Conditions: 150 mM KOAc, 10 mM MgCl2 and 150 mM bicine (pH 8.5), 24 C. The record gives the reactivity of an RNA of 177 nucleotides to 2A3 and DMS. DMS adducts were read by reverse transcription with MarathonRT. It was measured as part of the RMDB library OK2TST. 2A3 adducts were read by reverse transcription with SuperScript II with manganese.

[RMDB]
RNA sequence: GGGAACGACUCGAGUAGAGUCGAAAAAUGGGACACCAAGAUAACAAACGCUGACUUGGAAGAUGAACUUAUGAUAGUGGAGCGUAUGGGUAAGACACACAGACGUCUAGCCCAGUCUAUCAUGGAAAGUAAUCCUUUUAUUCGUAAAAGGAUUACUAAAAGAAACAACAACAACAAC
Reactivity to 2A3 in 0.01 (KOAc 150mM, MgCl2 10mM, bicine 150mM(pH8.5), 24C), signal-to-noise 9, nucleotides 027 to 126: a000u120g020g010g020a020c020a010c050c010a010a010g020a080u140a080a030c030a090a110a010c050g020c050u040g040a060c010u040u050g040g030a100a040g050a100u160g050a070a040c040u140u120a040u050g010a010u010a020g030u050g080g080a050g050c030g020u070a050u020g000g000g000u030a040a010g010a000c010a000c010a000c010a070g130a200c090g020u000c000u020a050g020c000c010c000a000g010u010c000u010a020u010c010a010u030g030g050a110a140
Reactivity to DMS in 0.01 (KOAc 150mM, MgCl2 10mM, bicine 150mM(pH8.5), 24C), signal-to-noise 9, nucleotides 027 to 126: a100u010g000g000g010a120c100a150c020c010a030a040g010a190u010a100a100c090a070a080a070c060g020c020u000g010a090c030u000u000g000g010a110a090g010a150u010g000a100a090c130u010u000a020u000g000a030u010a010g020u000g010g010a050g010c030g010u000a040u000g000g010g010u000a110a040g000a010c010a180c140a150c300a150g010a110c190g010u000c000u000a300g000c000c000c000a020g010u000c010u000a010u000c020a020u010g010g000a110a070